[RMDB]
RNA sequence: GGGAACGACUCGAGUAGAGUCGAAAAUACUGCGUACCGGUACGUACUAGUACUAUCAUGCGCUAGGAGUACAUGCAGCGCGGAUCCAUGAGUACGGAUCCUCAGUACCAUGGCAGACACAUGAUCGCCCAUCACUGUCAUUCGUGACAGUGAUGGGAAAAGAAACAACAACAACAAC
Reactivity to DMS in 0.01 (KOAc 150mM, MgCl2 10mM, bicine 150mM(pH8.5), 24C), signal-to-noise 3, nucleotides 027 to 126: u000a080c050u000g010c030g020u000a140c220c060g000g010u000a010c020g010u010a290c010u000a030g020u000a060c020u000a100u030c210a080u010g010c030g000c000u000a020g020g000a300g000u010a010c040a020u030g000c090a140g010c010g000c010g010g010a120u010c050c000a020u000g000a170g010u000a040c030g000g020a090u000c020c010u010c060a130g000u010a010c010c020a030u000g000g020c230a020g010a100c070a040c180a080u000g000a110u000c120g020